[RMDB]
RNA sequence: GGGAACGACUCGAGUAGAGUCGAAAAACAGUGGAAGCCAAUACAUUUGUGUCCUUGGUUGACCAUCACGAAAUGGAGCAAGAACUGAGACAUGACUUGACCUGUAGCUCUUUCGACAUAUUGUUCUCAGUUACAUUUAAUAAAAGAACACCUCAUACUAUAAAUUUAGCUUCGGCUAAAUUUAUAGAAAAGAAACAACAACAACAAC
Reactivity to 2A3 in 0.01 (KOAc 150mM, MgCl2 10mM, bicine 150mM(pH8.5), 24C), signal-to-noise 3, nucleotides 027 to 156: a000c060a030g040u080g020g030a050a000g000c000c020a060a030u140a090c060a160u090u200u180g130u040g040u060c040c030u030u010g050g000u050u050g060a100c020c000a030u080c030a010c110g060a050a020a080u140g020g000a040g020c020a080a050g050a090a010c020u020g030a000g000a010c010a030u050g020a070c040u060u040g080a080c000c020u010g040u050a000g000c020u000c000u070u140u060c020g030a050c040a050u210a080u030u110g030u120u050c020u020c040a030g010u000u060a030c020a030u090u120u100a150a120u130a020a120a020a050g180a090a010c010a030c270c050u170c130a100u160a170
Reactivity to DMS in 0.01 (KOAc 150mM, MgCl2 10mM, bicine 150mM(pH8.5), 24C), signal-to-noise 2, nucleotides 027 to 156: a030c060a070g060u020g000g040a210a090g000c090c020a030a070u000a040c070a150u010u000u000g050u000g010u000c060c040u000u020g040g020u000u010g010a200c050c010a040u000c040a210c100g010a060a040a110u000g020g010a250g000c050a070a150g010a040a070c070u000g000a080g020a090c040a130u010g000a130c090u010u010g010a060c020c030u000g010u000a090g030c040u010c020u000u010u010c020g070a080c040a070u020a080u000u000g010u010u010c010u000c010a100g020u010u000a090c070a150u010u010u000a010a170u010a060a090a070a100g000a090a070c010a030c000c030u010c050a040u000a170
The data come from the RNA Mapping Database (RMDB), library OK3TST. This 207-nucleotide RNA was probed chemically with 2A3 and DMS. For DMS the reverse transcriptase was MarathonRT. The DMS profile rests on 1,902 reads. The reactions ran in a buffer of 150 mM KOAc, 10 mM MgCl2 and 150 mM bicine (pH 8.5), at 24 C. For 2A3 the reverse transcriptase was SuperScript II with manganese. For 2A3, 1,382 sequencing reads were counted.